Chemical mapping of a 177-nucleotide RNA with DMS and 2A3. For DMS the reverse transcriptase was MarathonRT.
RNA sequence: GGGAACGACUCGAGUAGAGUCGAAAAGAUAUGGAUCGAACCAGCAAGGAACUCGGAAACGAGAAUUCUGAUGACCUGGAUCGAUCCUAAGUCAAAACUAUACCCUCCGUUCGCGGAGGGUAUAGAACACCUUGUUUCUGUUCGCAGAAACAAGGUGAAAAGAAACAACAACAACAAC
Reactivity to DMS in 0.01 (KOAc 150mM, MgCl2 10mM, bicine 150mM(pH8.5), 24C), signal-to-noise 2, nucleotides 027 to 126: g000a040u000a300u020g000g000a000u000c010g040a000a040c000c020a040g040c010a100a130g000g010a020a040c030u000c000g000g000a090a100a180c000g000a010g000a100a090u000u010c000u000g010a040u000g010a090c300c000u000g000g000a050u000c000g000a000u000c000c000u000a010a060g000u000c000a070a110a080a190c010u000a000u000a000c030c000c000u000c000c000g000u000u010c200g000c000g030g000a020g000g000g000u010a000u010a000g020a140a210
Reactivity to 2A3 in 0.01 (KOAc 150mM, MgCl2 10mM, bicine 150mM(pH8.5), 24C), signal-to-noise 2, nucleotides 027 to 126: g030a020u070a050u160g000g040a000u010c010g000a010a040c010c010a000g040c050a080a230g010g000a000a020c010u000c010g000g040a090a030a020c010g020a010g040a150a300u040u010c020u040g170a300u130g060a070c020c020u020g030g000a050u000c000g010a000u000c000c000u010a070a000g020u000c020a060a000a000a100c010u020a000u000a010c000c000c000u000c010c020g010u040u030c300g010c000g190g000a000g020g000g000u000a000u000a010g000a000a000